[RMDB]
RNA sequence: GGGAACGACUCGAGUAGAGUCGAAAAAUUGUAGAAACGGUGGAAGGCGGAUGCUAAAUCAUUUAAGUAACGGACAAUACGGUGUGGCGCUCUUUUUGCAGCGGCUUCCGCAACAACGUCCGCGAACGACCACUGACCGGUUCGCCGGUCAGUGGUCAAAAGAAACAACAACAACAAC
Reactivity to 2A3 in 0.01 (KOAc 150mM, MgCl2 10mM, bicine 150mM(pH8.5), 24C), signal-to-noise 1, nucleotides 027 to 126: a000u150u010g000u080a210g240a000a080a140c070g000g000u130g000g000a000a000g000g080c010g000g030a000u030g000c000u030a050a130a110u160c200a300u070u130u060a040a000g000u000a000a000c010g110g000a000c000a050a030u110a130c000g080g000u000g200u110g190g000c010g000c000u090c040u000u250u130u040u260g000c080a000g000c000g000g000c000u090u000c000c000g000c000a020a120c050a090a030c170g000u000c000c000g000c000g000a090a000c010